RNA sequence: GGGAACGACUCGAGUAGAGUCGAAAAAAGAUAUGGACGCUCUAAAGGAGCGAAGAACUAUGGAUAACUACAUCGGAAACGAUGUAGGAAGCCAUAGGGAGCUCCGAUUGGAGCGUCCUAAGUCAAACAACUGUCAUGUCUUCGGACAUGACAGUUGAAAAGAAACAACAACAACAAC
Reactivity to DMS in 0.01 (KOAc 150mM, MgCl2 10mM, bicine 150mM(pH8.5), 24C), signal-to-noise 2, nucleotides 027 to 126: a090a100g000a070u010a300u000g000g000a030c000g030c000u000c000u000a030a110a290g020g010a040g090c000g000a040a070g000a180a170c010u000a000u000g000g000a010u000a190a300c010u000a000c000a000u010c010g000g010a110a110a200c000g010a020u010g000u000a000g020g000a070a200g000c010c000a000u010a000g000g000g030a120g010c000u000c010c000g010a210u010u000g010g000a000g020c000g000u000c000c000u000a040a060g010u010c040a150a110a150
The record gives the reactivity of an RNA of 177 nucleotides to DMS. Reactivities are given for positions 27 through 126. For DMS the reverse transcriptase was MarathonRT. Values are in units of 0.01, from 0 to 300, in steps of 10.